An RNA of 207 nucleotides, treated with 2A3 and DMS and read out base by base.
The RNA was probed in 150 mM KOAc, 10 mM MgCl2 and 150 mM bicine (pH 8.5) at 24 C.
It was measured as part of the RMDB library OK3TST.
The DMS profile rests on 10,176 reads.
DMS (dimethyl sulfate) methylates the pairing face of unpaired adenines and cytosines.
[RMDB]
RNA sequence: GGGAACGACUCGAGUAGAGUCGAAAAAUAAAUGUUGGCCACUGACCAAGAGAGUUCACAAUAACAAAUGUAAGGGGAGUUGUAUGUCUGUAGUUUUGUGUGUAUUCCUUCAGUCAACAGAUAGCUUUGGAGGACUUGUGUGUGUCAGGCAUUUUGCUCCAGAUUAUAGAUUCGUCUAUAAUCUGGAAAAAGAAACAACAACAACAAC
Reactivity to 2A3 in 0.01 (KOAc 150mM, MgCl2 10mM, bicine 150mM(pH8.5), 24C), signal-to-noise 4, nucleotides 027 to 156: a000u080a000a040a040u070g000u030u040g050g010c050c010a050c040u040g040a040c000c050a060a010g070a010g000a000g090u100u080c050a030c030a120a090u140a200a020c040a080a110a050u150g050u140a070a090g020g020g000g000a030g030u040u020g050u070a110u080g040u030c080u050g040u020a060g010u040u040u070u090g040u000g010u010g020u030a100u040u080c010c000u020u040c010a020g060u050c020a040a050c010a120g100a120u130a050g030c020u130u090u060g020g000a030g000g020a030c010u040u040g010u000g000u000g010u010g020u050c010a000g040g000c010a000u050u080u050u090g030c020
Reactivity to DMS in 0.01 (KOAc 150mM, MgCl2 10mM, bicine 150mM(pH8.5), 24C), signal-to-noise 4, nucleotides 027 to 156: a140u000a050a050a090u000g000u000u010g000g020c030c050a100c090u010g000a090c040c050a060a100g000a150g010a120g010u000u000c040a050c050a100a110u000a090a140c040a070a080a090u000g020u000a070a080g020g020g030g020a120g030u000u000g010u000a060u000g000u010c030u000g020u010a080g020u000u000u000u010g030u010g010u000g020u000a120u000u000c010c020u000u000c030a090g010u000c030a060a110c060a090g010a090u000a110g020c040u000u000u010g020g000a070g020g000a070c090u000u020g020u000g020u000g020u000g020u000c030a050g020g010c060a140u000u000u000u000g010c130